[RMDB]
RNA sequence: GGGAACGACUCGAGUAGAGUCGAAAACACCGCGGUGAAUACCGAUGCGGCGGUGGUCUUUGACGCCCUGCCGGGUCAAGUCUUCCCGGCGCACGUGACCAGCAGCGACGCCGGGAUUCUGGCGGGACCAUAGUCCGCCGUUCGCGGCGGACUAUGGAAAAGAAACAACAACAACAAC
Reactivity to DMS in 0.01 (KOAc 150mM, MgCl2 10mM, bicine 150mM(pH8.5), 24C), signal-to-noise 1, nucleotides 027 to 126: c000a090c000c000g020c000g020g060u030g000a240a040u040a050c230c020g100a190u000g020c000g000g030c000g000g020u000g000g000u000c020u000u020u000g000a060c180g030c100c030c000u000g020c080c000g020g000g000u000c020a080a120g020u000c080u000u000c000c000c000g000g000c010g000c090a020c000g000u030g000a060c160c000a110g010c010a300g010c020g000a300c000g000c000c000g080g000g000a030u020u000c000u030g000g000c010g010g000g010a110
Reactivity to 2A3 in 0.01 (KOAc 150mM, MgCl2 10mM, bicine 150mM(pH8.5), 24C), signal-to-noise 4, nucleotides 027 to 126: c050a010c000c000g020c020g110g030u090g080a210a090u200a180c050c010g060a120u240g080c010g070g000c020g000g030u070g040g000u060c000u080u090u110g030a050c030g090c030c000c020u030g000c000c010g040g000g020u040c060a120a060g030u000c070u060u050c010c000c000g000g010c010g000c030a240c020g000u030g060a180c070c120a090g120c060a000g030c030g010a020c000g010c000c000g000g000g000a000u030u050c000u020g050g000c010g010g010g040a000

Source: RMDB library OK1LIB, as collected in RNAgym. An RNA of 177 nucleotides, treated with DMS and 2A3 and read out base by base. Values cover nucleotides 27 to 126.